Structure probing data (2A3 and DMS) for a 177-nucleotide construct. Conditions: 150 mM KOAc, 10 mM MgCl2 and 150 mM bicine (pH 8.5), 24 C.
RNA sequence: GGGAACGACUCGAGUAGAGUCGAAAAAACAGCCUGUUUUCCUGGGCUCGGGCGCGCCCCGGCGAUGAGCUGCCUACCCCGGAAAGCCCGAGCAUGGGUUGGUGGGGCGACAGCUAUUCGCCCGUCAGCUACACCAAUUAUUCGUAAUUGGUGUAGCAAAAGAAACAACAACAACAAC
Reactivity to 2A3 in 0.01 (KOAc 150mM, MgCl2 10mM, bicine 150mM(pH8.5), 24C), signal-to-noise 4, nucleotides 027 to 126: a000a000c050a020g070c040c030u090g060u040u070u020u020c000c000u010g050g020g000c020u000c040g010g010g000c030g000c010g020c010c000c010c000g000g000c010g030a060u100g100a010g030c020u020g000c010c010u110a120c020c000c000c000g050g070a090a050a010g020c000c000c020g030a070g090c060a070u170g000g030g000u030u020g040g050u180g020g010g000g000c000g020a000c010a030g040c020u080a080u090u020c010g000c020c020c000g090u050c020a010
Reactivity to DMS in 0.01 (KOAc 150mM, MgCl2 10mM, bicine 150mM(pH8.5), 24C), signal-to-noise 7, nucleotides 027 to 126: a070a060c050a090g020c050c040u000g000u000u000u000u000c020c010u000g020g000g000c010u000c030g000g010g020c010g030c300g000c120c030c020c030g000g000c050g000a070u000g010a070g010c020u000g000c030c010u010a280c050c020c000c000g000g010a100a130a100g000c010c000c000g000a120g020c180a070u010g010g010g020u010u000g000g010u010g010g010g020g020c300g000a010c100a040g010c050u010a100u000u010c010g000c020c020c070g010u000c140a110
Values cover nucleotides 27 to 126. Source: RMDB library OK2TST, as collected in RNAgym. The 2A3 profile rests on 6,325 reads. 2A3 adducts were read by reverse transcription with SuperScript II with manganese.